[RMDB]
RNA sequence: GGGAACGACUCGAGUAGAGUCGAAAAAGCGCAGGCAACAGCAUGUUGAAUGUGUUGACAAUGGUGUAUGCCUUCUGCGAGGCCACGGGGGUACCCUACAAGAGCUUUGACAGAGUGGCAAAGAUCCUAGUAUACAUGAUUUCGAUCAUGUAUACUAAAAAGAAACAACAACAACAAC
Reactivity to 2A3 in 0.01 (KOAc 150mM, MgCl2 10mM, bicine 150mM(pH8.5), 24C), signal-to-noise 9, nucleotides 027 to 126: a000g030c020g000c020a010g030g020c010a010a010c010a030g300c070a110u190g010u020u040g050a060a030u030g020u010g020u060u060g030a040c080a080a190u140g040g010u050g040u060a050u050g010c000c000u010u010c000u010g000c000g000a010g010g000c000c020a030c050g020g000g000g010g200u300a270c020c000c000u020a030c030a070a040g020a020g030c000u030u010u020g030a030c000a000g030a070g170u100g020g000c000a020a030a010g060a010u030c000c010
Reactivity to DMS in 0.01 (KOAc 150mM, MgCl2 10mM, bicine 150mM(pH8.5), 24C), signal-to-noise 9, nucleotides 027 to 126: a060g010c020g010c030a020g000g010c010a010a010c010a160g020c210a090u010g010u000u000g010a060a030u000g010u000g010u000u000g010a110c180a110a100u010g010g010u000g010u000a130u000g010c000c000u000u000c010u000g010c020g000a020g010g010c000c010a130c140g000g000g010g010g020u010a090c020c000c010u000a080c130a080a110g000a140g010c010u000u000u000g000a140c020a020g000a030g010u010g010g010c010a020a050a130g000a090u010c020c050
Chemical mapping of a 177-nucleotide RNA with 2A3 and DMS. For 2A3, 54,664 sequencing reads were counted. The RNA was probed in 150 mM KOAc, 10 mM MgCl2 and 150 mM bicine (pH 8.5) at 24 C. DMS adducts were read by reverse transcription with MarathonRT. Reactivities are rounded to 0.1 and cut off at 0 and 3. 2A3 adducts were read by reverse transcription with SuperScript II with manganese.